[RMDB]
RNA sequence: GGGAACGACUCGAGUAGAGUCGAAAACUUUCGGGCAUCUCUUACCAUGUAUUCGGCAGUCUGCCCUAUCGGAGAUCCUGCGCGUGAUCUCAGUCGAGCACAAAGGCCAGCACAGCAGGUAGUGUCACUCAGCAUUAAUCUUCGGAUUAAUGCUGAGAAAAGAAACAACAACAACAAC
Reactivity to 2A3 in 0.01 (KOAc 150mM, MgCl2 10mM, bicine 150mM(pH8.5), 24C), signal-to-noise 2, nucleotides 027 to 126: c010u070u070u090c060g010g010g020c030a060u020c050u010c010u130u060a060c010c020a060u070g030u080a160u100u110c020g010g000c010a020g060u030c040u060g050c000c000c000u010a090u060c050g070g020a030g000a030u010c020c010u110g050c150g010c050g090u110g040a050u000c010u000c020a000g060u060c040g030a010g000c030a020c040a100a090a000g070g000c000c000a020g040c030a020c020a040g100c020a020g070g000u030a020g020u030g070u020c010a040
Reactivity to DMS in 0.01 (KOAc 150mM, MgCl2 10mM, bicine 150mM(pH8.5), 24C), signal-to-noise 4, nucleotides 027 to 126: c050u000u010u000c100g020g030g020c040a040u010c050u010c030u010u010a090c060c060a090u010g010u010a090u010u000c130g010g000c060a040g010u010c090u010g020c020c020c030u000a040u000c080g020g010a050g010a030u010c010c030u000g020c120g020c120g000u000g010a010u000c010u000c030a110g010u010c110g010a070g030c070a020c080a070a080a100g000g020c030c040a050g010c050a050c040a090g010c070a050g010g020u000a060g010u010g000u000c090a160